[RMDB]
RNA sequence: GGGAACGACUCGAGUAGAGUCGAAAAACUGACGGUACGCCGUCAGAACGGUAGAAAAGAUGGUUUGAAAACCACGCCUUCUACCAAUAAAGUAAAUAAAUAGGCGGAGCGGUCAUACGUGACCGCAAAAACAUCCUUGGCUUCGGCCAAGGAUGAACAAUACACCAGGCUUCGGCCUGGUGUAUUGAAAAGAAACAACAACAACAAC
Reactivity to 2A3 in 0.01 (KOAc 150mM, MgCl2 10mM, bicine 150mM(pH8.5), 24C), signal-to-noise 2, nucleotides 027 to 156: a000c010u000g000a000c010g000g000u050a030c180g030c030c010g010u000c000a010g000a040a010c010g030g000u000a000g000a020a010a010a020g050a270u020g000g040u020u070u240g080a110a090a000a000c000c000a000c000g000c000c000u000u000c000u000a000c000c000a000a000u090a020a030a010g050u030a000a020a130u080a080a070a040u080a030g000g000c020g010g030a010g010c000g000g000u000c000a010u020a110c150g030u050g010a000c000c000g030c000a010a010a010a010a010c000a010u000c000c010u000u000g000g000c000u010u020c190g120g000c010c000a000a000g000g000a000u000g000a000a000